[RMDB]
RNA sequence: GGGAACGACUCGAGUAGAGUCGAAAAAGGAGUGUAAACAGUAGCUCAUCUCCAAAUGCUUCUGUCUACAAUGGUGUCUGCAAAAUAGGCUAAUGCAAUGGUGGCACAAACCUUCUGAGAGUAUACAAUCAAUAUCUGUAUUUGAGGUCCACCUUAACCUUUUAGUGCCAUUCGUGGCACUAAAAGGAAAAGAAACAACAACAACAAC
Reactivity to DMS in 0.01 (KOAc 150mM, MgCl2 10mM, bicine 150mM(pH8.5), 24C), signal-to-noise 2, nucleotides 027 to 156: a180g010g000a180g030u000g000u000a010a040a050c030a070g000u000a050g000c010u000c070a110u000c000u000c130c030a040a050a200u000g050c010u020u000c030u000g000u000c010u010a010c040a050a070u000g030g010u000g020u010c020u010g060c040a020a080a070a100u000a050g010g080c040u000a060a120u000g020c050a060a060u010g000g020u000g010g050c110a080c070a010a110a090c050c000u000u000c070u000g020a220g040a120g010u000a090u000a060c020a070a090u000c040a060a100u010a100u000c090u000g030u000a050u000u000u020g000a130g000g000u000c000c000a030c040c030u000u000a060a220
Reactivity to 2A3 in 0.01 (KOAc 150mM, MgCl2 10mM, bicine 150mM(pH8.5), 24C), signal-to-noise 4, nucleotides 027 to 156: a000g110g000a070g030u070g010u060a020a060a020c010a020g020u030a010g040c040u060c100a140u110c120u060c110c040a050a080a040u170g020c010u030u010c010u010g020u000c010u020a040c040a050a160u100g040g000u050g040u010c030u020g060c050a020a030a050a070u120a080g050g000c020u070a050a050u100g010c010a020a050u080g050g000u020g040g000c030a010c050a060a090a060c050c000u110u090c050u110g070a030g010a020g100u060a050u030a090c070a020a100u110c030a100a060u090a030u180c060u040g080u060a120u040u090u050g030a020g000g000u000c030c010a040c030c000u030u070a040a070
This 207-nucleotide RNA was probed chemically with DMS and 2A3. DMS adducts were read by reverse transcription with MarathonRT. For 2A3 the reverse transcriptase was SuperScript II with manganese. DMS (dimethyl sulfate) methylates the pairing face of unpaired adenines and cytosines. Values cover nucleotides 27 to 156.